[RMDB]
RNA sequence: GGGAACGACUCGAGUAGAGUCGAAAAAAAUCCAGCGGCUUAACCGUUGGGCUUUCAUGGGAUACUACAUUGCUUGGGACUGGGAGAGGUAGGAGGUACUCGGGGGGUAGGGGUGAAAUCCUGUAAUCAAUUCAGUGGUAUUCGUACCACUGAAUUGAAAAGAAACAACAACAACAAC
Reactivity to DMS in 0.01 (KOAc 150mM, MgCl2 10mM, bicine 150mM(pH8.5), 24C), signal-to-noise 1, nucleotides 027 to 126: a000a010a050u020c000c000a040g000c010g020g010c150u120u060a110a220c000c000g000u000u000g000g030g000c070u000u000u000c060a080u000g040g000g000a050u000a070c130u050a080c130a100u000u020g040c030u000u000g000g000g000a110c070u000g000g000g000a110g000a070g000g000u050a040g000g000a050g050g000u000a090c180u000c110g000g000g000g000g000g000u030a070g000g000g010g000u000g000a060a050a080u020c010c020u000g000u090a020a090u020
Reactivity to 2A3 in 0.01 (KOAc 150mM, MgCl2 10mM, bicine 150mM(pH8.5), 24C), signal-to-noise 7, nucleotides 027 to 126: a000a000a000u020c010c000a010g000c000g030g000c090u190u160a110a100c000c010g000u000u010g000g000g000c020u030u070u070c080a100u120g000g000g030a030u050a110c020u030a040c040a140u080u180g090c060u060u070g020g020g040a090c080u040g030g040g010a140g020a020g030g040u120a050g030g070a030g030g000u040a060c030u040c070g010g000g000g010g030g040u080a030g030g010g010g010u090g060a030a010a020u020c000c000u030g080u110a030a070u030
An RNA of 177 nucleotides, treated with DMS and 2A3 and read out base by base. Source: RMDB libraries RFM100 and RFMREP, as collected in RNAgym. The reactions ran in a buffer of 150 mM KOAc, 10 mM MgCl2 and 150 mM bicine (pH 8.5), at 24 C.